[RMDB]
An RNA of 177 nucleotides, treated with DMS and 2A3 and read out base by base. For DMS, 1,269 sequencing reads were counted. 2A3 adducts were read by reverse transcription with SuperScript II with manganese.
RNA sequence: GGGAACGACUCGAGUAGAGUCGAAAAAGGAAACUAAUCUAUCUCCCUGCAAAAUGCUGCCAAGCAACAUCGUCUAGAUCUUAAAUAUAAGAUCAAGCCGAAGUUGGUUUGCUGCACUUUGCUGGGACCAUUAGUACGAGUUCGCUCGUACUAAUGGAAAAGAAACAACAACAACAAC
Reactivity to DMS in 0.01 (KOAc 150mM, MgCl2 10mM, bicine 150mM(pH8.5), 24C), signal-to-noise 1, nucleotides 027 to 126: a100g010g000a050a070a170c130u010a150a120u000c060u010a060u000c130u000c000c010c010u010g000c010a030a010a020a050u010g000c000u000g000c040c060a010a020g000c000a000a000c000a060u000c000g000u010c000u000a050g000a010u000c000u000u000a060a110a100u020a100u000a000a010g000a000u010c000a050a020g000c050c000g000a020a030g020u000u000g000g000u000u000u000g000c020u000g000c000a000c060u000u000u000g000c010u000g010g020g010a090
Reactivity to 2A3 in 0.01 (KOAc 150mM, MgCl2 10mM, bicine 150mM(pH8.5), 24C), signal-to-noise 3, nucleotides 027 to 126: a010g130g010a090a070a050c070u090a140a140u020c020u050a140u030c060u010c020c000c010u000g010c000a000a000a010a010u010g000c000u010g000c000c010a020a010g030c000a020a010c000a030u010c000g000u000c010u010a020g010a010u010c000u050u070a210a300a230u300a170u020a110a010g000a000u000c000a020a010g000c020c010g020a020a010g000u000u020g090g260u000u000u000g010c010u010g000c010a010c010u020u010u000g020c020u030g000g000g000a020
It was measured as part of the RMDB library RFMREP. For DMS the reverse transcriptase was MarathonRT. The reactions ran in a buffer of 150 mM KOAc, 10 mM MgCl2 and 150 mM bicine (pH 8.5), at 24 C.